[RMDB]
RNA sequence: GGGAACGACUCGAGUAGAGUCGAAAAGAUAUGGAUUGGUACUGCAUCGAUCGUCCGUUUUAUGCGUAACAUCGGUCGGAAACGACCGUGGCAUAAAACGGACGGGAGCAGGACCAAUCCUAAGUCAUCAAAUUACAUUGUUCGCAAUGUAAUUUGAAAAAGAAACAACAACAACAAC
Reactivity to DMS in 0.01 (KOAc 150mM, MgCl2 10mM, bicine 150mM(pH8.5), 24C), signal-to-noise 6, nucleotides 027 to 126: g010a060u000a300u000g000g010a020u000u010g000g010u000a010c000u010g010c000a300u000c180g010a120u010c010g000u000c000c000g010u000u000u000u000a000u000g010c010g020u010a070a130c240a030u010c020g000g010u000c000g010g000a090a130a240c010g020a010c000c000g040u000g010g020c000a010u000a010a000a010a010c000g000g000a000c000g000g010g000a040g020c000a000g000g000a020c010c000a000a000u000c000c010u000a020a090g010u000c040a200
Reactivity to 2A3 in 0.01 (KOAc 150mM, MgCl2 10mM, bicine 150mM(pH8.5), 24C), signal-to-noise 4, nucleotides 027 to 126: g040a040u110a070u240g000g000a010u010u010g000g000u010a010c010u010g030c040a300u260c140g190a160u100c020g040u010c000c000g000u020u000u000u000a010u010g040c060g100u160a130a060c080a290u300c040g000g010u000c010g000g070a130a100a090c010g000a000c000c010g000u000g010g000c000a000u010a010a000a000a000c000g000g000a000c000g000g000g000a010g000c000a010g010g010a010c010c000a010a000u010c000c000u010a060a010g030u010c010a060

Chemical mapping of a 177-nucleotide RNA with DMS and 2A3. The 2A3 profile rests on 15,318 reads. DMS adducts were read by reverse transcription with MarathonRT. Values are in units of 0.01, from 0 to 300, in steps of 10. For DMS, 11,414 sequencing reads were counted. The RNA was probed in 150 mM KOAc, 10 mM MgCl2 and 150 mM bicine (pH 8.5) at 24 C.